[RMDB]
RNA sequence: GGGAACGACUCGAGUAGAGUCGAAAAGAUGGAGGGUCCGGCCUCGGACGCCUCCUAUAAGAUGUAACUAUUACGAGGCCAUUAAUGGCGUUUUCGCCUAGGUGCACGUCGGCGUGCGUGUCACCGUAAGACUUAAUGAAUAACACGCCGGAUACAAGGCAUUUAGUAUAUUCGUAUACUAAAUGCCAAAAGAAACAACAACAACAAC
Reactivity to 2A3 in 0.01 (KOAc 150mM, MgCl2 10mM, bicine 150mM(pH8.5), 24C), signal-to-noise 3, nucleotides 027 to 156: g140a050u090g000g000a010g010g010g030u000c020c030g020g020c010c020u010c010g000g000a000c020g080c000c000u050c000c000u000a010u020a020a020g050a010u120g070u080a050a050c030u020a060u170u190a030c050g000a000g000g000c000c000a010u060u170a070a090u150g010g010c020g060u090u030u170u300c020g000c000c010u000a050g000g000u000g000c000a000c010g030u040c000g010g010c000g010u000g000c000g000u010g030u050c020a000c000c000g020u030a040a040g030a000c010u110u150a090a050u220g100a070a060u120a130a010c000a000c000g000c010c000g010g000a110u210a060c120a080a070
Reactivity to DMS in 0.01 (KOAc 150mM, MgCl2 10mM, bicine 150mM(pH8.5), 24C), signal-to-noise 2, nucleotides 027 to 156: g000a170u000g020g000a030g010g040g010u000c020c030g020g050c010c040u010c010g000g010a010c000g010c010c020u000c000c000u000a030u000a070a120g010a190u000g020u020a080a160c090u000a140u000u020a210c000g000a040g000g010c000c020a280u020u000a030a070u000g000g020c000g030u000u000u000u000c020g050c000c010u000a280g020g040u000g000c000a040c040g010u010c000g020g000c020g030u000g000c020g010u000g020u000c000a030c040c070g010u010a020a120g020a110c110u000u000a070a110u000g030a110a110u030a140a090c040a060c000g020c000c000g000g000a090u000a060c140a090a210

Structure probing data (2A3 and DMS) for a 207-nucleotide construct. DMS adducts were read by reverse transcription with MarathonRT. Values cover nucleotides 27 to 156. For 2A3, 2,458 sequencing reads were counted.